RNA sequence: GGGAACGACUCGAGUAGAGUCGAAAAAUCAAAUAUUUGCCACAUUUCAAUGCCAACCCAUUCUUAAUCAACAUUGAUAUGCAUUUUCAUGAGGAUGCUACCUCGAUUUUGACAAAUGAAUGAAACACACCUCUAUUCCGUUCGCGGAAUAGAGGUGAAAAGAAACAACAACAACAAC
Reactivity to 2A3 in 0.01 (KOAc 150mM, MgCl2 10mM, bicine 150mM(pH8.5), 24C), signal-to-noise 1, nucleotides 027 to 126: a000u090c090a040a090a070u240a110u010u180u080g040c030c000a070c010a060u110u160u070c060a100a050u110g040c040c000a020a020c080c000c080a020u000u120c030u070u100a100a070u070c010a000a050c000a040u010u000g020a000u010a050u120g000c010a020u010u010u010u150c130a170u210g090a040g110g010a030u020g000c000u060a040c010c030u000c030g010a030u020u030u020u020g000a010c000a010a190a020u090g040a050a040u060g000a050a060a000c080a010
Reactivity to DMS in 0.01 (KOAc 150mM, MgCl2 10mM, bicine 150mM(pH8.5), 24C), signal-to-noise 1, nucleotides 027 to 126: a120u010c080a090a110a170u010a110u020u000u010g010c020c000a110c050a060u000u000u010c080a080a090u010g030c050c030a040a170c090c080c030a040u000u000c030u020u010a110a170u000c020a010a010c040a040u000u010g000a060u000a050u020g010c030a010u000u000u000u030c090a100u020g020a100g010g010a050u010g010c070u000a140c170c170u000c010g000a030u000u000u000u000g010a000c080a020a080a150u000g000a030a020u000g020a140a050a130c250a140